Chemical mapping of a 177-nucleotide RNA with DMS and 2A3. The data come from the RNA Mapping Database (RMDB), library OK2TST. For DMS, 59,762 sequencing reads were counted. For DMS the reverse transcriptase was MarathonRT. The 2A3 profile rests on 31,252 reads. The RNA was probed in 150 mM KOAc, 10 mM MgCl2 and 150 mM bicine (pH 8.5) at 24 C.
[RMDB]
RNA sequence: GGGAACGACUCGAGUAGAGUCGAAAAGGUCGAUCUCCGGCACGUUGUAGGCCGGGUAGAACGCGUUGAAGGGGAACGGCGAGGCCACCUGCGACGGAUCGAAGGUCGGCGCCAGCCGCGUACGGCAAGUAUUAGCAUAUUUCGAUAUGCUAAUACUAAAAGAAACAACAACAACAAC
Reactivity to DMS in 0.01 (KOAc 150mM, MgCl2 10mM, bicine 150mM(pH8.5), 24C), signal-to-noise 9, nucleotides 027 to 126: g020g020u000c010g010a040u000c010u000c010c000g010g000c300a040c030g010u000u000g010u000a040g010g010c100c100g000g000g020u000a060g010a080a140c040g000c020g010u000u000g010a140a150g010g000g010g010a100a060c030g010g010c020g010a190g000g000c010c010a120c010c010u000g000c010g010a040c090g000g000a050u000c010g000a040a020g010g010u000c030g010g010c010g000c030c030a150g010c010c010g020c260g010u010a060c060g010g000c040a090
Reactivity to 2A3 in 0.01 (KOAc 150mM, MgCl2 10mM, bicine 150mM(pH8.5), 24C), signal-to-noise 7, nucleotides 027 to 126: g060g000u010c000g010a030u010c020u000c010c000g000g000c000a020c070g050u030u060g050u070a040g000g050c120c110g070g000g000u030a040g040a110a030c020g010c010g050u030u070g170a190a090g040g020g000g020a040a030c040g140g010c020g040a050g130g000c000c010a020c010c000u010g010c010g020a010c020g030g000a050u040c020g020a020a010g010g000u020c020g010g000c030g040c010c000a020g000c000c010g030c040g090u110a100c050g010g000c050a030